This 177-nucleotide RNA was probed chemically with DMS and 2A3.
For 2A3, 2,606 sequencing reads were counted.
The RNA was probed in 150 mM KOAc, 10 mM MgCl2 and 150 mM bicine (pH 8.5) at 24 C.
[RMDB]
RNA sequence: GGGAACGACUCGAGUAGAGUCGAAAAGACAGAUCCUCUGGCAGAUAUAGUAACAAGGUGGAAUCAGACUGAAUCUCCAAUAAUAAAUCCAUGGUCAGAAGCUGUAGUUUCUACAAUGACACCAUGGCUACACACCUACAUUCGUGUAGGUGUGUAGAAAAGAAACAACAACAACAAC
Reactivity to DMS in 0.01 (KOAc 150mM, MgCl2 10mM, bicine 150mM(pH8.5), 24C), signal-to-noise 3, nucleotides 027 to 126: g000a130c110a080g010a150u000c030c020u000c040u000g000g010c040a050g010a070u010a070u010a100g020u000a100a060c070a110a080g010g010u000g000g010a090a070u010c060a070g000a060c080u000g000a070a060u000c070u000c000c050a070a060u020a080a070u000a010a050a080u010c000c010a010u000g000g000u000c090a080g000a080a180g030c140u000g010u010a040g020u010u020u000c040u000a070c010a040a080u000g010a210c190a090c000c020a010u000g000g000
Reactivity to 2A3 in 0.01 (KOAc 150mM, MgCl2 10mM, bicine 150mM(pH8.5), 24C), signal-to-noise 3, nucleotides 027 to 126: g040a000c040a030g060a060u040c010c020u000c020u010g030g000c030a010g050a100u080a020u050a130g150u060a120a040c040a110a060g100g000u050g030g020a050a060u050c010a020g060a100c030u020g020a040a060u030c030u020c020c040a020a040u170a140a010u050a030a050a030u010c000c010a000u000g000g020u050c040a040g040a170a020g010c060u040g060u100a040g020u030u080u080c000u020a010c030a020a100u050g020a000c000a010c020c000a010u020g010g040